[RMDB]
RNA sequence: GGGAACGACUCGAGUAGAGUCGAAAACGCUGGCCUGUCGCGAAUGCGCGGCGAGGAACAAGGCAUUGUUCUCCUGGGUAGAGAGCCAGCGCUGACCGAAGGCCUGCUCAGAAAGCGAGCUUAAUAGCACCCCAUCGACUUUCGAGUCGAUGGGGUGAAAAGAAACAACAACAACAAC
Reactivity to 2A3 in 0.01 (KOAc 150mM, MgCl2 10mM, bicine 150mM(pH8.5), 24C), signal-to-noise 2, nucleotides 027 to 126: c030g020c030u030g030g000c000c000u150g120u190c020g000c020g080a080a000u170g040c050g000c020g000g000c010g120a090g010g010a010a000c000a020a060g240g020c140a230u010u060g000u010u020c040u010c030c060u180g050g070g000u220a050g000a030g020a010g080c010c010a060g000c020g000c040u030g050a000c010c010g000a020a000g000g030c000c020u020g000c000u000c010a080g150a090a140a000g030c130g120a000g000c060u120u170a160a060u060a100g000
Reactivity to DMS in 0.01 (KOAc 150mM, MgCl2 10mM, bicine 150mM(pH8.5), 24C), signal-to-noise 1, nucleotides 027 to 126: c080g000c000u000g040g010c010c000u010g010u000c000g000c000g000a090a000u000g000c060g000c000g000g000c000g050a210g000g000a070a090c030a000a020g000g030c280a000u000u000g000u090u000c040u000c080c090u010g000g000g000u000a130g030a070g000a210g110c000c000a070g030c070g040c050u000g020a300c300c040g040a280a020g040g030c000c000u010g040c000u000c000a060g000a080a090a040g040c070g000a150g000c000u000u000a060a100u030a020g080
This 177-nucleotide RNA was probed chemically with 2A3 and DMS. Values cover nucleotides 27 to 126. It was measured as part of the RMDB library OK1LIB.